[RMDB]
RNA sequence: GGGAACGACUCGAGUAGAGUCGAAAAGAGCAGGCUGCAGCUAGUAUGUAUAAGGAGGCACGAGCUGUUGACAGAAAGUCAAAGAUUGUUUCUGCUAUGCAUAGUCUACUUUUUGGUAUGCUUAAGAAACUUGAUAUGUCCAGUGUCAACACUAUUAACUUUGCUAGUAAUUCGUUACUAGCAAAGUAAAAGAAACAACAACAACAAC
Reactivity to DMS in 0.01 (KOAc 150mM, MgCl2 10mM, bicine 150mM(pH8.5), 24C), signal-to-noise 5, nucleotides 027 to 156: g020a100g020c020a070g010g010c040u010g020c030a080g010c010u000a080g010u000a060u000g020u010a080u010a070a130g000g010a100g020g020c040a080c070g000a090g040c050u000g030u000u010g010a090c010a070g010a110a260a090g010u000c020a050a080a150g010a250u000u000g000u000u000u010c010u000g020c130u010a090u010g030c010a040u000a040g020u010c030u000a140c200u000u000u010u000u000g010g000u000a030u000g010c010u010u000a090a070g010a060a030a040c020u000u000g010a150u000a080u000g020u000c040c050a140g000u000g010u000c020a030a030c030a050c080u000a090u000u000a070
Reactivity to 2A3 in 0.01 (KOAc 150mM, MgCl2 10mM, bicine 150mM(pH8.5), 24C), signal-to-noise 7, nucleotides 027 to 156: g050a010g000c030a020g040g000c020u050g010c040a020g000c010u040a020g060u060a080u150g060u020a090u050a170a060g050g010a010g020g000c040a010c070g030a020g000c060u020g010u020u010g000a000c010a010g100a100a090a010g020u040c030a030a080a040g070a100u070u070g010u010u020u000c010u010g060c080u090a050u110g000c000a010u010a030g070u110c030u070a130c120u150u230u080u180u120g030g000u020a000u010g000c000u020u010a060a010g000a010a020a010c000u030u030g030a030u050a060u170g020u000c030c030a050g050u010g010u040c010a020a010c010a000c040u040a060u160u070a020
Source: RMDB library OK3TST, as collected in RNAgym.
An RNA of 207 nucleotides, treated with DMS and 2A3 and read out base by base.
The 2A3 profile rests on 7,983 reads.
The DMS profile rests on 12,237 reads.